[RMDB]
RNA sequence: GGGAACGACUCGAGUAGAGUCGAAAAACAAGUGGUGGUAGUCCGCCACUCUAAGGGGACGCCUUUAGAAGAAGAGGCUAGGGGGUAUUCCGGUGUGGGAUACUUAGUAAUAUGCAGCGCUAAUUGCUCAAGGAUAGAUGAUUCGUCAUCUAUCCAAACGUUAUAGUAGAUUCGUCUACUAUAACGUAAAAGAAACAACAACAACAAC
Reactivity to 2A3 in 0.01 (KOAc 150mM, MgCl2 10mM, bicine 150mM(pH8.5), 24C), signal-to-noise 3, nucleotides 027 to 156: a000c170a190a040g010u000g010g010u000g040g110u010a010g020u010c000c000g000c000c000a000c010u020c000u000a020a010g010g000g000g040a030c100g100c040c000u000u000u020a020g010a080a000g010a020a010g060a110g010g000c010u010a010g000g010g000g030g000u020a020u010u040c040c030g170g040u170g060u250g130g020g000a000u000a020c000u020u080a030g040u070a030a130u080a070u280g080c070a050g010c030g010c100u110a120a080u080u140g010c010u050c120a070a050g020g000a000u000a000g000a000u000g010a000u030u030c090g080u010c120a000u010c000u000a000u000c000c000a000a010
Reactivity to DMS in 0.01 (KOAc 150mM, MgCl2 10mM, bicine 150mM(pH8.5), 24C), signal-to-noise 2, nucleotides 027 to 156: a070c070a070a090g000u000g000g020u010g020g010u000a060g000u000c010c010g030c000c010a000c010u010c030u010a040a030g010g020g010g030a110c260g010c010c010u000u000u000a040g000a070a120g010a070a040g020a120g010g040c030u000a050g000g000g010g020g020u000a010u000u000c030c000g020g060u000g010u010g030g010g000a030u000a000c030u010u000a080g030u000a070a110u000a110u000g020c090a090g000c040g020c040u010a110a110u000u000g000c000u000c090a080a220g040g010a020u000a000g010a020u000g000a090u010u000c290g000u000c000a000u000c000u000a030u010c000c000a000a020
This 207-nucleotide RNA was probed chemically with 2A3 and DMS. Values cover nucleotides 27 to 156. The reactions ran in a buffer of 150 mM KOAc, 10 mM MgCl2 and 150 mM bicine (pH 8.5), at 24 C. DMS adducts were read by reverse transcription with MarathonRT. For 2A3 the reverse transcriptase was SuperScript II with manganese.